RNA sequence: GGGAACGACUCGAGUAGAGUCGAAAAGGACGUCAUCAAGGGCAUGGAAGUACUCGAAAGUCGUGAGGGCGGCUACGAGGGCGAUAUCUUAUUCGUGGGCACGGACGCCAAGAACGGUAUCGUUCGUGACUUGUCCGACCGAGGGACGGAACUCGGCUCUAUGAUCAGGCUUCGGCCUGAUCAUAGAAAAAGAAACAACAACAACAAC
Reactivity to 2A3 in 0.01 (KOAc 150mM, MgCl2 10mM, bicine 150mM(pH8.5), 24C), signal-to-noise 4, nucleotides 027 to 156: g050g000a010c020g010u070c030a060u010c030a070a060g060g000g020c040a030u050g020g040a090a020g040u070a050c020u000c030g040a130a070a040g050u050c040g040u140g040a080g000g050g000c040g010g010c010u040a030c050g010a070g000g020g030c000g030a030u010a030u080c050u110u160a100u090u060c050g060u160g020g010g000c060a020c070g050g030a040c040g050c010c020a020a010g100a070a020c070g010g040u090a060u240c040g010u020u010c020g020u030g040a070c030u090u150g020u010c010c010g060a020c000c020g000a010g020g020g000a020c140g040g000a060a050c000u000c010g010g000c010
Reactivity to DMS in 0.01 (KOAc 150mM, MgCl2 10mM, bicine 150mM(pH8.5), 24C), signal-to-noise 1, nucleotides 027 to 156: g000g030a100c050g040u000c010a210u020c070a060a100g070g000g030c000a120u000g020g000a110a100g010u000a140c040u000c020g000a120a050a130g020u000c040g010u000g000a100g020g000g010c070g000g010c050u000a040c070g010a100g010g040g060c040g010a070u000a010u000c110u020u010a180u000u000c040g000u000g000g080g010c090a100c060g000g000a060c050g010c060c010a020a090g000a010a010c040g010g010u000a080u020c030g050u000u000c030g000u000g000a020c020u000u040g010u010c000c000g030a100c040c000g010a120g010g020g020a020c070g000g010a040a050c000u000c020g000g000c050
This 207-nucleotide RNA was probed chemically with 2A3 and DMS. Conditions: 150 mM KOAc, 10 mM MgCl2 and 150 mM bicine (pH 8.5), 24 C. Source: RMDB library OK3TST, as collected in RNAgym. For 2A3, 3,044 sequencing reads were counted.